Structure probing data (2A3 and DMS) for a 177-nucleotide construct. DMS adducts were read by reverse transcription with MarathonRT. For 2A3 the reverse transcriptase was SuperScript II with manganese. The 2A3 profile rests on 836 reads. The DMS profile rests on 882 reads. The RNA was probed in 150 mM KOAc, 10 mM MgCl2 and 150 mM bicine (pH 8.5) at 24 C.

[RMDB]
RNA sequence: GGGAACGACUCGAGUAGAGUCGAAAAGUAGCAUGAUACUAGCUAAAACGUCGGACACAACAGCAGAGGUAGCGGCUGACGUGGUACGACUGAAAUUCAGGUAUGAAGUAACAAACGGAGCGCAUGAGAGCAGUAGCAGUUUCGACUGCUACUGCUCAAAAGAAACAACAACAACAAC
Reactivity to 2A3 in 0.01 (KOAc 150mM, MgCl2 10mM, bicine 150mM(pH8.5), 24C), signal-to-noise 2, nucleotides 027 to 126: g170u130a010g000c040a010u140g040a000u150a140c040u060a040g070c040u000a010a010a060a040c140g000u000c000g010g070a040c000a000c020a160a050c000a040g020c010a030g030a020g190g130u130a100g070c070g060g000c000u050g030a100c140g050u040g000g020u220a000c000g000a000c000u000g070a030a050a070u120u070c040a010g000g070u050a060u130g040a020a090g060u130a030a070c010a180a050a000c050g000g000a040g000c010g060c000a000u030g060a030
Reactivity to DMS in 0.01 (KOAc 150mM, MgCl2 10mM, bicine 150mM(pH8.5), 24C), signal-to-noise 1, nucleotides 027 to 126: g000u000a010g000c000a060u060g090a030u030a000c070u020a060g000c000u040a090a000a030a150c060g030u000c040g020g000a110c000a000c010a150a300c000a010g090c020a090g000a030g060g030u000a040g000c160g000g000c000u000g040a130c240g000u000g000g020u000a140c000g000a040c000u020g010a180a020a000u000u000c000a030g000g000u010a000u000g000a070a170g000u000a060a110c210a080a020a180c080g000g000a030g040c000g000c080a100u080g000a170